This 170-nucleotide RNA was probed chemically with 2A3 and DMS. Values cover nucleotides 27 to 129. The RNA was probed in 150 mM KOAc, 10 mM MgCl2 and 150 mM bicine (pH 8.5) at 24 C.

RNA sequence: GGGAACGACUCGAGUAGAGUCGAAAACAACUGUUAUCUUGCCACUGCAUUGUUAACACUCCAACAAAUAGAGUGGAAGUUUAAUCCACCUGCUCUACAAAGGGCUGGUGAAGCUGCUAACUUUUGUCCAGGAACAAGUUCGCUUGUUCCAAAAGAAACAACAACAACAAC
Reactivity to 2A3 in 0.01 (KOAc 150mM, MgCl2 10mM, bicine 150mM(pH8.5), 24C), signal-to-noise 9, nucleotides 027 to 129: c000a000a010c030u020g010u050u020a070u120c040u040u120g170c010c010a040c030u080g040c060a050u030u020g020u030u050a090a030c090a070c130u050c070c040a020a020c020a040a120a080u200a060g070a010g030u000g000g010a030a000g010u030u090u140a070a050u060c020c000a000c000c010u020g000c000u000c000u050a150c110a090a240a090g010g000g000c000u020g010g000u000g010a030a010g030c070u080g000c020u020a020a030c000u040u010u020u050g050u030c020c040a050
Reactivity to DMS in 0.01 (KOAc 150mM, MgCl2 10mM, bicine 150mM(pH8.5), 24C), signal-to-noise 9, nucleotides 027 to 129: c030a000a050c070u020g030u040u020a050u080c060u000u080g090c010c040a000c060u060g020c070a080u000u000g000u020u020a070a090c110a080c160u080c090c100a060a040c050a040a080a090u090a050g030a050g040u000g000g000a030a010g010u000u000u000a050a080u050c080c020a030c000c000u040g000c000u020c010u000a110c300a080a150a070g000g030g060c000u020g000g040u000g000a020a030g040c100u010g000c100u030a000a000c030u030u020u020u040g030u060c030c040a080